[RMDB]
RNA sequence: GGGAACGACUCGAGUAGAGUCGAAAAUCAUUGAGAUGCUGGGCGCUAUGGUCGUCCUCCUCCGGCUGACCUCCUUCUCAGCUGCUGACCGGCGCCGCACAGGCGGCAUCUCCGCUUCGUGUGCAAAAAAAGAAUGGUCGGUUCGCCGACCAUUCAACGACUAUAUUGUCUUCGGACAAUAUAGUCGAAAAGAAACAACAACAACAAC
Reactivity to DMS in 0.01 (KOAc 150mM, MgCl2 10mM, bicine 150mM(pH8.5), 24C), signal-to-noise 2, nucleotides 027 to 156: u000c060a110u010u000g010a050g020a020u010g000c010u000g030g010g020c000g000c010u000a050u010g060g020u000c020g000u000c020c050u010c030c040u000c060c020g010g030c010u010g030a010c020c100u010c110c120u000u000c070u000c000a020g040c020u000g020c050u000g010a020c010c000g010g010c010g050c030c010g000c080a090c070a100g020g010c000g020g020c030a040u000c040u000c010c080g000c070u000u000c140g010u000g020u000g000c020a000a010a120a140a100a100a130g010a040a020u000g010g000u000c000g020g010u000u000c300g020c000c000g010a020c000c000a000u000u000c000a050a130
Reactivity to 2A3 in 0.01 (KOAc 150mM, MgCl2 10mM, bicine 150mM(pH8.5), 24C), signal-to-noise 3, nucleotides 027 to 156: u140c040a050u070u180g010a020g020a020u040g020c080u080g030g010g020c030g010c030u100a180u300g020g000u030c020g060u040c000c060u020c000c000u050c020c010g000g010c000u020g000a040c020c050u180c020c020u270u080c030u030c050a010g020c010u030g020c090u100g000a010c020c010g010g020c000g000c020c000g020c000a030c000a020g110g000c000g000g010c010a060u000c000u000c020c010g020c020u090u120c110g100u050g000u040g080c060a080a040a030a010a000a010a030g000a000a000u000g000g000u000c010g000g020u060u070c160g020c060c000g000a000c000c000a000u000u010c000a000a000